[RMDB]
RNA sequence: GGGAACGACUCGAGUAGAGUCGAAAAUGAACCUUCCGUACUAUACCUCACGGGCUACCGCCUUAGUCUACCUCGCCCUAGUACGGACCGAGUCUAGAAGAAGUAUAGCCUAACCCCGUGUAACAUAACCAAACAUUAACUUCGGUUAAUGUUUGGUAAAAGAAACAACAACAACAAC
Reactivity to 2A3 in 0.01 (KOAc 150mM, MgCl2 10mM, bicine 150mM(pH8.5), 24C), signal-to-noise 4, nucleotides 027 to 126: u110g020a010a040c000c010u040u030c030c010g050u050a040c030u060a050u080a130c020c040u050c030a030c030g010g020g000c020u020a030c020c020g030c010c000u020u040a020g020u000c010u020a050c010c010u010c020g030c020c000c000u040a080g060u070a040c060g000g000a010c020c040g010a010g020u000c030u040a020g010a070a010g030a030a010g050u070a090u120a240g000c000c020u020a040a040c000c000c000c030g010u020g030u040a080a010c020a070u100a050
Reactivity to DMS in 0.01 (KOAc 150mM, MgCl2 10mM, bicine 150mM(pH8.5), 24C), signal-to-noise 5, nucleotides 027 to 126: u010g010a110a110c050c020u010u000c030c020g040u010a070c070u010a060u010a090c100c070u000c080a070c090g010g010g010c010u000a070c280c210g000c070c010u000u000a070g010u000c020u010a050c120c010u010c050g020c060c030c010u000a100g000u000a090c180g000g000a040c180c020g000a030g020u000c030u000a040g000a080a080g010a060a060g010u000a090u010a050g000c020c010u000a080a170c210c010c000c040g030u010g020u010a050a070c120a130u010a110